[RMDB]
The record gives the reactivity of an RNA of 177 nucleotides to DMS and 2A3. It was measured as part of the RMDB library RFMREP. The reactions ran in a buffer of 150 mM KOAc, 10 mM MgCl2 and 150 mM bicine (pH 8.5), at 24 C.
RNA sequence: GGGAACGACUCGAGUAGAGUCGAAAAUAGGGACAUAAGUUCAUUCAUGCCAAGUAUCUUUCCAGCAUGUUUCUCCCAUUUAGAAUAUCUAGCAUGUAAGGCCUUUCAAUAUUAAUAUAAGCCCAAUCCAUAAUACCAAGUUCGCUUGGUAUUAUGGAAAAGAAACAACAACAACAAC
Reactivity to DMS in 0.01 (KOAc 150mM, MgCl2 10mM, bicine 150mM(pH8.5), 24C), signal-to-noise 2, nucleotides 027 to 126: u000a060g010g010g000a060c300a080u000a050a100g020u010u010c020a120u000u000c020a040u000g020c010c050a080a130g000u000a050u000c040u000u010u000c030c070a090g000c040a030u000g010u010u000u020c080u000c010c010c020a090u010u000u010a100g000a110a080u000a040u010c040u000a090g000c020a010u000g000u000a070a090g030g010c050c030u000u000u000c020a040a070u000a060u010u010a090a120u000a080u000a050a150g000c020c010c020a090a190u000
Reactivity to 2A3 in 0.01 (KOAc 150mM, MgCl2 10mM, bicine 150mM(pH8.5), 24C), signal-to-noise 4, nucleotides 027 to 126: u080a010g030g000g020a010c030a080u270a120a100g010u040u060c020a040u130u030c000a010u030g020c000c030a090a040g020u050a090u060c040u030u140u030c040c010a010g000c040a040u010g010u020u070u030c040u010c010c020c010a020u100u080u100a080g020a100a040u030a020u180c040u030a020g010c010a020u070g030u070a040a010g010g020c000c010u030u140u020c030a060a020u040a040u260u160a100a080u140a050u030a160a030g010c000c010c000a000a010u010